The record gives the reactivity of an RNA of 177 nucleotides to 2A3 and DMS. For 2A3 the reverse transcriptase was SuperScript II with manganese. For DMS the reverse transcriptase was MarathonRT. For DMS, 63,242 sequencing reads were counted.
RNA sequence: GGGAACGACUCGAGUAGAGUCGAAAACUAGCCUCCGCUUAUACGCGCGCUCACGGAGGCAGAUGCUCGAACAACAGCGCGCGGGCAUUCAGUCGAAGAGCCAAUACUCGCGGCCGUCCGGACGAGAGACAUCGGGUUCAUUCGUGGGCCUGGUGUCAAAAGAAACAACAACAACAAC
Reactivity to 2A3 in 0.01 (KOAc 150mM, MgCl2 10mM, bicine 150mM(pH8.5), 24C), signal-to-noise 9, nucleotides 027 to 126: c010u010a020g000c000c000u000c000c000g030c080u180u140a090u040a170c020g000c000g000c000g000c010u030c010a060c020g010g000a010g000g000c000a000g020a020u110g030c020u030c080g090a110a030c030a030a020c010a060g000c000g000c000g000c000g000g000g000c010a040u060u050c030a020g130u080c000g020a070a020g020a050g030c010c010a060a040u080a090c030u020c030g030c040g000g000c020c030g070u040c030c030g040g020a030c020g030a020g000a010
Reactivity to DMS in 0.01 (KOAc 150mM, MgCl2 10mM, bicine 150mM(pH8.5), 24C), signal-to-noise 9, nucleotides 027 to 126: c030u000a130g010c000c000u000c000c000g020c300u010u000a100u000a140c040g010c010g010c020g020c010u000c260a120c050g000g000a020g010g010c000a020g000a070u010g010c050u000c050g010a090a080c110a080a110c130a030g010c010g020c010g010c010g000g000g000c060a090u000u000c080a090g010u000c000g000a070a060g000a080g010c020c040a070a100u010a100c050u000c030g010c070g000g000c020c030g000u000c040c040g000g000a070c060g010a080g000a160